[RMDB]
RNA sequence: GGGAACGACUCGAGUAGAGUCGAAAAAGCAUACAGAACUACAGUCUGUUUUGUGUCCAGUGCCGCCUCGUUUCUUCCGGUAACAUUGACACCACAAUGGGAAACUUUGGCUCCCCAGGAGCACGAACAGUACGGCUGGAUUCGUCCAGCCGUACUGAAAAGAAACAACAACAACAAC
Reactivity to DMS in 0.01 (KOAc 150mM, MgCl2 10mM, bicine 150mM(pH8.5), 24C), signal-to-noise 1, nucleotides 027 to 126: a160g050c000a000u000a100c000a060g050a040a140c170u040a060c170a150g040u020c000u000g010u020u030u000u000g010u000g010u010c000c000a080g000u010g000c020c120g050c020c030u000c060g010u000u010u010c000u000u000c030c020g000g000u000a010a190c040a040u000u000g000a240c000a160c030c070a040c060a060a030u120g000g000g040a190a080a080c000u030u000u050g000g020c110u010c080c000c100c110a090g060g030a010g000c010a030c090g040a080a100
Reactivity to 2A3 in 0.01 (KOAc 150mM, MgCl2 10mM, bicine 150mM(pH8.5), 24C), signal-to-noise 3, nucleotides 027 to 126: a000g060c020a020u040a020c020a030g060a100a030c070u100a060c160a140g110u010c010u020g000u040u050u170u150g010u020g020u000c020c000a030g010u010g130c010c000g000c020c000u020c020g010u040u050u040c030u070u020c060c040g080g030u070a080a050c020a080u060u050g040a060c010a030c040c010a050c030a050a050u060g010g010g010a040a080a050c000u110u050u070g030g000c000u000c000c010c000c020a040g040g000a020g030c020a010c090g020a100a020